An RNA of 177 nucleotides, treated with 2A3 and read out base by base.
[RMDB]
RNA sequence: GGGAACGACUCGAGUAGAGUCGAAAAUUGCAUCCAAUGUGAAGAAAACCAUGGAAACUCGUGCACCUGAGGACCUCAAUCGCACAGUUCCUCUUGGGUUUACCUUCAGUUUCCCCGUGGAGCAGACGAUCCUCGGCGGAUUCGUCCGCCGAGGAUCAAAAGAAACAACAACAACAAC
Reactivity to 2A3 in 0.01 (KOAc 150mM, MgCl2 10mM, bicine 150mM(pH8.5), 24C), signal-to-noise 1, nucleotides 027 to 126: u040u080g040c000a040u000c000c000a000a060u170g000u020g050a010a000g060a020a070a000a000c010c000a040u050g020g020a120a100a060c000u120c250g000u000g000c000a050c060c010u090g000a070g090g220a100c050c120u110c050a030a090u070c100g000c000a000c000a000g010u000u000c030c000u150c110u070u210g100g000g010u000u040u000a100c000c000u000u020c000a010g010u100u000u000c000c020c000c020g070u090g000g000a030g000c000a000g010a000c120

The RNA was probed in 150 mM KOAc, 10 mM MgCl2 and 150 mM bicine (pH 8.5) at 24 C.